[RMDB]
RNA sequence: GGGAACGACUCGAGUAGAGUCGAAAAGAUCCCACAAGGAACAACUCGUGUCAAUGGACUUUUCCGUUAAGCGAGGAACGAGUAGGAAAAGGAAACGUUCCCCAAUCGGAACGAAUGGGUAGAGAACCUCCAUGAUAUGGUUCGCCAUAUCAUGGAGAAAAGAAACAACAACAACAAC
Reactivity to 2A3 in 0.01 (KOAc 150mM, MgCl2 10mM, bicine 150mM(pH8.5), 24C), signal-to-noise 2, nucleotides 027 to 126: g030a080u000c010c040c000a010c020a010a000g120g000a110a010c010a030a000c030u020c020g000u030g100u150c080a050a050u020g020g000a040c080u080u110u270u020c010c000g010u030u040a080a000g030c010g040a010g020g010a020a020c060g030a030g050u120a090g000g070a040a030a060a020g010g050a050a110a010c010g010u010u020c000c000c000c000a070a080u160c040g040g050a050a020c010g000a060a040u090g030g030g020u080a030g030a000g000a110a010c010
Reactivity to DMS in 0.01 (KOAc 150mM, MgCl2 10mM, bicine 150mM(pH8.5), 24C), signal-to-noise 3, nucleotides 027 to 126: g020a190u010c000c000c000a140c240a090a070g000g010a060a110c090a120a120c000u010c020g020u000g000u000c300a060a050u000g030g010a110c300u000u010u000u000c010c010g020u000u020a070a180g010c020g000a030g000g010a090a070c040g020a140g020u000a080g000g000a000a030a070a080g000g000a070a040a110c030g000u000u000c000c000c020c080a080a100u010c190g000g000a090a060c040g000a060a050u000g000g000g000u000a070g010a110g000a110a090c110